[RMDB]
RNA sequence: GGGAACGACUCGAGUAGAGUCGAAAAUACAUACAUACUGUUGAACUGGCAGAUGCGUUGGGCUUACCGAUCCUUGCAUGUAUUGAACUCGACGAGCAGAUCAUUCGUGAGACCAAACGUUUUAAGAGCAUCUAGUGUCGUUCGCGACACUAGAUGCAAAAGAAACAACAACAACAAC
Reactivity to DMS in 0.01 (KOAc 150mM, MgCl2 10mM, bicine 150mM(pH8.5), 24C), signal-to-noise 2, nucleotides 027 to 126: u000a060c050a050u000a170c090a080u010a060c120u000g010u000u000g010a140a050c170u010g000g000c050a050g000a080u010g010c050g000u000u000g010g020g040c070u000u000a000c040c090g000a030u010c030c100u000u030g000c030a120u000g000u010a050u000u000g000a040a030c100u000c060g030a130c120g000a080g000c100a050g000a020u000c070a140u000u000c240g020u000g010a050g020a120c000c020a010a060a080c090g010u000u000u000u000a050a170g010a140
Reactivity to 2A3 in 0.01 (KOAc 150mM, MgCl2 10mM, bicine 150mM(pH8.5), 24C), signal-to-noise 1, nucleotides 027 to 126: u070a000c040a010u070a060c000a020u150a090c010u040g100u050u070g130a300a210c090u030g040g030c010a020g000a100u020g030c080g000u000u000g040g000g000c000u040u060a030c020c030g020a010u000c050c000u030u080g040c020a040u090g030u050a100u020u170g150a160a030c030u060c060g070a080c020g000a060g000c020a020g020a000u050c000a030u110u150c040g000u020g010a010g010a030c020c000a110a080a010c030g030u000u060u070u070a120a090g030a040
Structure probing data (DMS and 2A3) for a 177-nucleotide construct. Reactivities are given for positions 27 through 126. Conditions: 150 mM KOAc, 10 mM MgCl2 and 150 mM bicine (pH 8.5), 24 C. It was measured as part of the RMDB library OK2TRN.